RNA sequence: GGGAACGACUCGAGUAGAGUCGAAAAGUGUAUAGGCAAUCCGACCCUCCGCCUAUACACGAAUUAAGGAGGGUGGAGAUCUUAUGCUCGCGAUCUUACGUCACGAGCGAGGGCCUGCGGCUCGUGACGCAUCUUACGCAGGCCAUAGCGAGCUACAACCAUCAUAGUAGUUCGCUACUAUGAUGGUAAAAGAAACAACAACAACAAC
Reactivity to DMS in 0.01 (KOAc 150mM, MgCl2 10mM, bicine 150mM(pH8.5), 24C), signal-to-noise 1, nucleotides 027 to 156: g020u000g020u000a000u000a010g000g040c030a070a100u000c000c020g040a140c000c010c000u000c020c060g070c010c000u020a020u010a000c000a030c010g010a050a080u000u020a090a060g010g000a020g020g010g050u020g040g010a070g010a090u000c000u000u000a090u000g010c020u000c020g020c020g000a050u000c070u000u010a060c080g010u010c000a010c000g000a030g030c030g010a070g010g020g040c090c020u000g010c020g030g000c020u000c010g000u000g000a030c050g040c050a030u000c090u020u000a110c010g030c030a050g020g020c010c010a120u000a030g000c030g040a080g010c030u010a090c070a100
Reactivity to 2A3 in 0.01 (KOAc 150mM, MgCl2 10mM, bicine 150mM(pH8.5), 24C), signal-to-noise 3, nucleotides 027 to 156: g010u010g000u010a000u000a010g000g000c050a090a150u100c100c060g050a090c060c000c010u020c020c030g000c000c000u010a010u000a000c010a000c010g010a010a020u180u120a070a050g060g010a000g010g010g010u030g030g040a060g000a010u020c020u080u170a110u180g020c000u000c010g010c030g040a050u020c030u090u110a040c010g010u000c000a000c020g000a000g010c040g020a040g010g000g010c000c000u020g020c010g030g000c010u000c000g000u000g000a000c000g000c010a060u070c030u110u110a010c040g000c000a000g000g000c000c000a010u020a000g000c000g010a000g000c000u040a050c030a030

Source: RMDB library OK3TST, as collected in RNAgym. Chemical mapping of a 207-nucleotide RNA with DMS and 2A3.